Source: RMDB library OK2TRN, as collected in RNAgym. This 177-nucleotide RNA was probed chemically with DMS and 2A3. In probing experiments dimethyl sulfate is read out at A N1 and C N3, which are open when not base-paired. For DMS, 5,811 sequencing reads were counted. The RNA was probed in 150 mM KOAc, 10 mM MgCl2 and 150 mM bicine (pH 8.5) at 24 C.
RNA sequence: GGGAACGACUCGAGUAGAGUCGAAAACAUUUGGAGCUUGGGAGUGGUGCUAUUUACUUGCCUGAGUGGCACUCUGCCCUUUUCGGACGAGUACGGCACCCCGGCGGCCCAGCAAAUAAAGAAGGGCGUAAUGUCUUGGAUUCGUCCAAGACAUUACAAAAGAAACAACAACAACAAC
Reactivity to DMS in 0.01 (KOAc 150mM, MgCl2 10mM, bicine 150mM(pH8.5), 24C), signal-to-noise 5, nucleotides 027 to 126: c050a130u010u000u000g010g010a210g030c040u000u020g050g020g010a140g030u010g010g010u000g000c020u000a110u000u000u000a020c020u000u010g010c030c020u000g010a010g030u010g010g000c020a140c250u000c240u010g020c010c000c120u000u000u000u000c050g010g010a030c020g000a020g010u010a030c300g010g010c020a030c000c000c040c070g010g020c060g000g010c020c010c020a110g010c080a050a070a090u000a060a060a070g010a120a070g000g010g010c160
Reactivity to 2A3 in 0.01 (KOAc 150mM, MgCl2 10mM, bicine 150mM(pH8.5), 24C), signal-to-noise 6, nucleotides 027 to 126: c020a050u090u100u160g100g020a120g020c070u090u160g080g060g040a180g040u160g010g030u020g010c000u040a110u150u230u030a030c010u000u010g010c010c010u010g000a010g010u220g010g010c010a040c100u220c180u160g020c020c000c020u020u050u030u090c080g040g000a150c010g010a000g000u010a030c030g000g000c010a010c000c000c000c010g040g040c050g010g000c000c000c000a010g020c020a020a160a170u270a090a150a020g140a050a090g050g040g020c050